[RMDB]
RNA sequence: GGGAACGACUCGAGUAGAGUCGAAAACCAUAGGAUUUCGAUCCUAUGGCCUGCUAUGUCGCGUAAUAGCUUUUCGACUCUACUAGGGUCGUUCCCACGCGAUGGGGACCGGUUUCGACCGGUCCAAGUUAAGAUAAAGGUUCGCCUUUAUCUUAACAAAAGAAACAACAACAACAAC
Reactivity to DMS in 0.01 (KOAc 150mM, MgCl2 10mM, bicine 150mM(pH8.5), 24C), signal-to-noise 5, nucleotides 027 to 126: c000c000a000u010a000g010g010a010u000u000u010c180g010a020u000c000c010u000a000u000g000g010c210c100u000g000c010u000a010u000g010u010c180g020c240g000u000a100a020u000a020g010c010u000u000u010u000c000g000a020c000u000c000u000a000c000u000a020g000g000g000u000c000g010u000u000c000c000c000a010c070g010c120g000a110u010g020g010g010g010a020c000c000g010g000u000u000u000c200g010a040c000c000g010g000u000c000c000a000a010